[RMDB]
RNA sequence: GGGAACGACUCGAGUAGAGUCGAAAAUACACAUUAGAAGUCGGCACAACUCCCGACUCGCGGUGAGCGAUGCAGCGUAGCGCGAGCUACGCAGCUGCUGUGCGGACGGCAAGCAAAAGCUAGCCAAACUGCACGAUACUUUCGAGUAUCGUGCAGUAAAAGAAACAACAACAACAAC
Reactivity to DMS in 0.01 (KOAc 150mM, MgCl2 10mM, bicine 150mM(pH8.5), 24C), signal-to-noise 3, nucleotides 027 to 126: u070a130c170a140c110a030u080u000a050g000a060a090g000u000c000g000g010c060a040c050a050a210c040u050c020c020c000g010a160c180u020c020g000c050g000g020u060g000a200g010c110g020a010u010g010c020a050g000c010g000u000a000g010c000g000c300g000a190g000c000u000a000c000g010c000a000g000c020u000g000c100u010g040u000g000c040g000g030a040c070g030g000c010a050a060g010c010a150a070a120a150g040c030u000a070g000c000c040a120a130
Reactivity to 2A3 in 0.01 (KOAc 150mM, MgCl2 10mM, bicine 150mM(pH8.5), 24C), signal-to-noise 2, nucleotides 027 to 126: u180a000c090a000c010a110u150u190a040g090a230a000g030u000c060g060g000c080a020c010a140a280c080u040c000c000c000g040a020c010u010c010g030c010g000g130u110g080a060g000c000g010a010u090g000c000a010g010c000g000u010a000g000c020g010c050g070a060g020c000u030a000c000g000c000a000g030c000u010g020c010u020g000u010g000c010g020g040a020c000g010g000c000a050a000g000c000a000a200a030a090g000c000u010a000g010c000c000a060a060

Chemical mapping of a 177-nucleotide RNA with DMS and 2A3. 2A3 adducts were read by reverse transcription with SuperScript II with manganese. Reactivities are rounded to 0.1 and cut off at 0 and 3. For 2A3, 1,800 sequencing reads were counted. The reactions ran in a buffer of 150 mM KOAc, 10 mM MgCl2 and 150 mM bicine (pH 8.5), at 24 C.